Structure probing data (2A3 and DMS) for a 207-nucleotide construct. The data come from the RNA Mapping Database (RMDB), library ARCHII. Reactivities are rounded to 0.1 and cut off at 0 and 3.
[RMDB]
RNA sequence: GGGAACGACUCGAGUAGAGUCGAAAAUACGUUAAAACGUUACAGUUAAAUAUAACUGCUAAAAACGAAAACAAUUCUUUCGCUUUAGCUGCCUAAAAACCAGCUAGCGAAGAUCCUCCCGGCAUCGCCCAUGUGCUCGGGUCAGGGUCCUAAUCGAGAAUAAACCUUAGUUCGCUAAGGUUUAUUCAAAAGAAACAACAACAACAAC
Reactivity to 2A3 in 0.01 (KOAc 150mM, MgCl2 10mM, bicine 150mM(pH8.5), 24C), signal-to-noise 3, nucleotides 027 to 156: u140a020c020g010u020u050a040a150a050a000c010g000u020u050a010c020a020g000u060u050a120a300a110u200a150u060a110a000c010u010g030c070u100a140a010a050a050a020c050g040a160a110a010a020c060a030a100u100u040c020u020u060u040c000g010c000u160u120u070a000g000c000u010g000c010c020u040a060a030a010a010a020c010c000a010g000c000u000a010g000c000g000a000a010g000a000u000c000c000u000c000c000c000g000g000c010a010u030c030g060c020c000c030a050u120g010u010g000c080u120c170g000g000g030u020c050a010g000g000g010u000c000c020u150a150a100u180c060g030a030
Reactivity to DMS in 0.01 (KOAc 150mM, MgCl2 10mM, bicine 150mM(pH8.5), 24C), signal-to-noise 2, nucleotides 027 to 156: u000a090c060g050u000u010a060a040a130a220c040g000u000u000a020c020a000g000u000u020a030a200a200u000a100u000a010a030c020u000g000c040u000a050a060a070a010a060c030g000a100a050a050a080c070a120a120u010u000c090u010u000u000c000g030c010u000u000u000a020g030c000u000g000c080c030u000a040a090a090a140a110c300c010a000g020c010u000a050g020c020g030a020a030g000a000u000c000c030u000c010c000c000g020g000c000a040u000c090g020c080c120c030a230u000g030u010g000c000u000c010g030g040g020u000c120a000g010g030g020u000c000c050u000a030a170u000c040g010a300
Conditions: 150 mM KOAc, 10 mM MgCl2 and 150 mM bicine (pH 8.5), 24 C.